Structure probing data (2A3) for a 207-nucleotide construct.
[RMDB]
RNA sequence: GGGAACGACUCGAGUAGAGUCGAAAACUACCUCACUAUGUCAUACUCAGUUGGUGCAACCACAAUCCUGGUAAAACCCAGCUCUACAUACUUCAUACCUGCACCCAUUAAAUUAAAAGAGACCAGGGAAAAACCAAUGGGCUCCUCUUUAAAUACAGUCCCUAAAUCAUUUCGAUGAUUUAGGGACAAAAGAAACAACAACAACAAC
Reactivity to 2A3 in 0.01 (KOAc 150mM, MgCl2 10mM, bicine 150mM(pH8.5), 24C), signal-to-noise 1, nucleotides 027 to 156: c030u040a050c010c010u120c000a070c040u080a020u090g070u000c000a090u040a180c000u030c110a030g010u070u060g050g020u040g080c080a080a090c050c100a000c000a050a090u190c040c000u000g000g020u060a040a080a040a070c010c030c000a000g000c000u030c000u010a030c000a040u110a070c030u000u030c010a010u080a140c000c010u070g030c030a050c000c000c000a030u090u180a090a030a210u060u020a020a020a110a000g100a030g060a030c000c010a010g000g010g110a090a050a230a000a000c070c030a080a160u000g000g120g000c050u000c050c000u050c040u170u190u180a020a000a230u300a060c030a040

Values cover nucleotides 27 to 156.